[RMDB]
RNA sequence: GGGAACGACUCGAGUAGAGUCGAAAAGAUUGGUGCUCUGCAUUCUUCGGUCAAUGGGAUUGUGCUCAUCGUUACAACUAUUCCAUACCGACAAUUUGUAUACGAUAAGACUGUGAAGGUGUUGAGACCACUCACGUGGGUUCGCCCACGUGAGUGGAAAAGAAACAACAACAACAAC
Reactivity to DMS in 0.01 (KOAc 150mM, MgCl2 10mM, bicine 150mM(pH8.5), 24C), signal-to-noise 1, nucleotides 027 to 126: g000a120u010u010g030g000u010g030c000u030c040u030g000c020a040u000u020c020u000u000c020g010g000u000c030a060a110u010g010g000g030a300u000u010g000u000g000c050u000c050a050u010c030g020u000u000a000c040a010a070c290u000a100u010u010c070c030a120u040a170c070c130g020a030c240a060a030u000u000u000g000u000a000u020a040c030g000a090u000a090a030g010a030c040u000g030u010g010a030a030g000g010u000g000u010u010g000a000g030a150
Reactivity to 2A3 in 0.01 (KOAc 150mM, MgCl2 10mM, bicine 150mM(pH8.5), 24C), signal-to-noise 1, nucleotides 027 to 126: g020a090u140u210g100g010u140g010c020u030c050u080g000c010a050u300u000c010u030u050c040g000g000u000c020a090a130u050g030g050g080a040u020u190g050u060g080c050u020c040a130u050c070g000u020u040a020c000a090a040c030u050a080u080u000c010c050a080u160a130c030c000g000a030c050a060a000u000u100u130g050u010a090u020a060c020g000a020u000a060a060g000a050c060u050g020u060g100a030a010g000g000u020g000u060u090g000a000g070a030